[RMDB]
The data come from the RNA Mapping Database (RMDB), library OK2TRN. This 177-nucleotide RNA was probed chemically with DMS and 2A3. For 2A3, 1,605 sequencing reads were counted. The DMS profile rests on 2,319 reads. The reactions ran in a buffer of 150 mM KOAc, 10 mM MgCl2 and 150 mM bicine (pH 8.5), at 24 C.
RNA sequence: GGGAACGACUCGAGUAGAGUCGAAAACAAUAUGUUGGUAACGUGGAGCCCUUAAUGGUUGCUUUUAUACCAAAUAAAUCCACUAUUGUACCUAGUGCUAUUGCGUCAGCAAUCUCAAGGAGAGAAACAUUUAUAUCGCGUUCGCGCGAUAUAAAUGAAAAGAAACAACAACAACAAC
Reactivity to DMS in 0.01 (KOAc 150mM, MgCl2 10mM, bicine 150mM(pH8.5), 24C), signal-to-noise 3, nucleotides 027 to 126: c050a050a050u010a030u000g020u030u010g010g010u000a070a110c180g020u000g030g000a060g010c050c030c080u000u020a090a080u010g000g010u020u000g030c130u010u000u010u010a080u010a050c040c020a030a090a100u000a070a090a100u000c040c010a040c070u000a090u000u000g000u000a130c010c020u000a040g020u000g020c160u020a040u000u010g000c040g000u020c270a090g010c030a040a040u000c030u000c020a100a050g000g010a150g000a060g000a100a080a150
Reactivity to 2A3 in 0.01 (KOAc 150mM, MgCl2 10mM, bicine 150mM(pH8.5), 24C), signal-to-noise 2, nucleotides 027 to 126: c010a000a110u110a050u290g130u170u080g030g020u040a180a080c100g030u050g010g030a020g040c010c010c010u060u240a120a050u140g010g000u060u110g020c010u070u120u110u140a130u070a080c000c000a050a130a030u090a000a060a020u010c000c010a020c040u010a050u050u120g080u020a040c000c000u040a070g030u020g110c020u020a010u020u060g040c010g030u100c080a050g000c000a000a070u010c010u040c000a050a050g100g010a070g040a000g050a100a070a010